[RMDB]
RNA sequence: GGGAACGACUCGAGUAGAGUCGAAAAUUUUCUGACAAAGUUAGAAAAAAUGAUUUAGACAUGAAUGUGGUAAAAGAAUUACUUUCUAACGGUGCAUCUCUAACAAUCAAGGAUAGCAGUAAUAAGGAUCCAAUAACCGUUUAUUUUCGAAGAACGACUACUAUGUGCGAUUCGUCGCACAUAGUAGAAAAGAAACAACAACAACAAC
Reactivity to DMS in 0.01 (KOAc 150mM, MgCl2 10mM, bicine 150mM(pH8.5), 24C), signal-to-noise 2, nucleotides 027 to 156: u010u000u010u010c010u000g000a120c030a060a130a250g000u000u020a040g000a010a030a020a100a140a110u000g000a150u000u000u010a120g060a170c040a090u000g000a040a130u000g020u020g020g000u000a030a060a040a140g000a170a140u000u000a090c100u000u000u000c030u010a050a020c040g020g060u000g000c030a060u010c020u020c020u000a050a050c110a060a050u000c030a020a070g000g000a080u000a030g060c070a030g000u000a070a080u030a040a070g060g010a090u000c070c080a060a060u000a090a130c050c030g030u000u000u010a060u000u010u000u010c050g020a070a150g020a040a120c010g010a170
Reactivity to 2A3 in 0.01 (KOAc 150mM, MgCl2 10mM, bicine 150mM(pH8.5), 24C), signal-to-noise 2, nucleotides 027 to 156: u080u040u010u000c020u040g020a020c020a050a300a030g010u020u010a010g000a020a050a020a000a040a040u100g010a050u100u110u180a070g040a060c020a050u110g100a190a140u140g050u050g040g110u150a110a040a020a100g020a020a080u090u040a080c030u040u130u020c000u050a020a010c030g040g020u010g000c010a050u010c040u010c020u080a130a130c090a040a070u100c000a010a030g000g000a020u030a000g000c010a000g040u050a030a060u090a050a000g000g000a010u050c050c000a050a040u110a090a040c020c000g020u000u100u000a160u050u110u060u110c080g030a050a020g000a120a040c030g090a010